Source information: Conditions: 150 mM KOAc, 10 mM MgCl2 and 150 mM bicine (pH 8.5), 24 C. An RNA of 207 nucleotides, treated with 2A3 and DMS and read out base by base. The 2A3 profile rests on 4,205 reads. As a SHAPE reagent, 2A3 marks flexible, mostly unpaired nucleotides at the ribose 2'-OH. DMS adducts were read by reverse transcription with MarathonRT. 2A3 adducts were read by reverse transcription with SuperScript II with manganese. It was measured as part of the RMDB library M2RFPK. Values cover nucleotides 27 to 156. For DMS, 2,007 sequencing reads were counted.
[RMDB]
RNA sequence: GGGAACGACUCGAGUAGAGUCGAAAAAGAUCGAUUACGAUCGAUCAAUGAUGCCCCUCACCCACCUCUGAAGAUCCCAAGUGGGCGAGGGAACGGAGCACGGGAUCACGAGCAGUACGCUGCUCGAAAAAGAACUAGACCUUCGGGUCUAGUUCAAGUCUAUGAAUCAGUUCGCUGAUUCAUAGACAAAAGAAACAACAACAACAAC
Reactivity to 2A3 in 0.01 (KOAc 150mM, MgCl2 10mM, bicine 150mM(pH8.5), 24C), signal-to-noise 4, nucleotides 027 to 156: a000g000a000u000c000g000a000u060u070a060c210g050a030u000c000g010a000u000c010a000a100u150g090a050u150g050c000c000c010c000u000c000a020c000c000c000a010c000c010u020c020u070g030a060a010g000a060u010c020c020c000a010a020g000u000g000g000g000c010g000a010g010g010g000a040a030c090g050g060a070g090c070a040c110g020g000g020a010u020c030a010c040g000a000g000c000a000g020u070a030c240g050c150u000g000c000u010c000g010a000a000a010a020a000g000a000a000c000u000a000g000a000c000c010u050u110c300g060g000g010u010c000u000a000g000u010u000c000a000a000
Reactivity to DMS in 0.01 (KOAc 150mM, MgCl2 10mM, bicine 150mM(pH8.5), 24C), signal-to-noise 1, nucleotides 027 to 156: a110g060a060u000c030g000a060u050u010a190c280g040a080u010c010g000a020u000c000a220a000u020g010a100u010g050c000c050c010c000u000c000a050c010c010c010a050c050c040u000c040u030g000a160a060g000a070u000c000c000c030a200a080g000u000g000g020g000c020g020a050g030g000g030a010a020c030g030g000a090g100c120a120c100g000g070g010a050u000c080a210c000g000a020g000c000a070g000u010a140c300g070c020u000g000c000u020c000g000a010a040a040a120a070g000a010a050c000u010a020g000a020c000c030u000u000c300g040g020g050u000c000u000a000g010u000u000c020a040a120